Chemical mapping of a 177-nucleotide RNA with 2A3 and DMS. The data come from the RNA Mapping Database (RMDB), library OK2TRN. The DMS profile rests on 1,037 reads. For DMS the reverse transcriptase was MarathonRT. As a SHAPE reagent, 2A3 marks flexible, mostly unpaired nucleotides at the ribose 2'-OH.
RNA sequence: GGGAACGACUCGAGUAGAGUCGAAAAGAGGAUUCAACGAGCUUCGUAGCAACGAUAGCAACGUAGCUUUUGCUACGACCCCAGCUAUCGAGGGGAGCUACGUCCCGUGCUCGAGGGCAGAAUCCGACCGUGCUGAGUAGUUCGCUACUCAGCACGGAAAAGAAACAACAACAACAAC
Reactivity to 2A3 in 0.01 (KOAc 150mM, MgCl2 10mM, bicine 150mM(pH8.5), 24C), signal-to-noise 2, nucleotides 027 to 126: g150a060g060g010a020u000u010c050a050a020c020g020a020g010c010u030u030c050g000u090a000g000c010a070a070c010g010a000u000a000g000c020a060a020c020g000u000a020g000c050u140u180u140u300g030c000u000a000c020g160a160c060c010c010c040a030g000c010u000a010u020c000g020a100g060g020g010g010a050g010c080u050a040c000g100u070c010c000c030g020u050g000c000u000c000g000a040g050g070g020c100a050g000a000a010u020c000c000g000a010
Reactivity to DMS in 0.01 (KOAc 150mM, MgCl2 10mM, bicine 150mM(pH8.5), 24C), signal-to-noise 1, nucleotides 027 to 126: g010a230g000g020a010u000u000c030a130a120c010g000a090g020c020u000u000c000g020u000a060g010c020a110a130c050g000a010u000a010g000c030a030a140c040g010u000a030g010c000u000u000u000u000g010c010u000a010c000g000a280c140c080c090c100a150g000c000u000a000u000c000g000a110g000g000g030g000a160g000c010u010a020c150g000u000c050c030c070g000u000g020c000u000c030g000a010g000g020g030c250a100g000a110a030u000c000c000g000a060